[RMDB]
RNA sequence: GGGAACGACUCGAGUAGAGUCGAAAAAGAGCUUUCGCCUUCCGGGAUCAUCAGGAAUUUGAAUUCGAUUACGGACGGAUUAAUUCGGAUUUGGCGUCAAAACAAGGCUCGUAUUCUGUCCGCCGAACUACCUGCAUCCAUUCGUGGAUGCAGGUAGAAAAGAAACAACAACAACAAC
Reactivity to DMS in 0.01 (KOAc 150mM, MgCl2 10mM, bicine 150mM(pH8.5), 24C), signal-to-noise 2, nucleotides 027 to 126: a140g020a050g000c020u000u000u010c020g010c000c010u000u000c000c000g020g020g010a090u010c160a080u000c060a120g010g020a060a040u010u000u010g000a050a090u000u000c050g010a030u000u020a140c070g000g000a020c020g000g010a030u000u000a050a050u030u010c000g000g000a040u000u000u000g010g000c000g000u020c100a080a090a080a180c300a060a080g010g020c000u000c020g000u000a090u000u010c070u000g010u000c020c000g000c060c060g000a050a140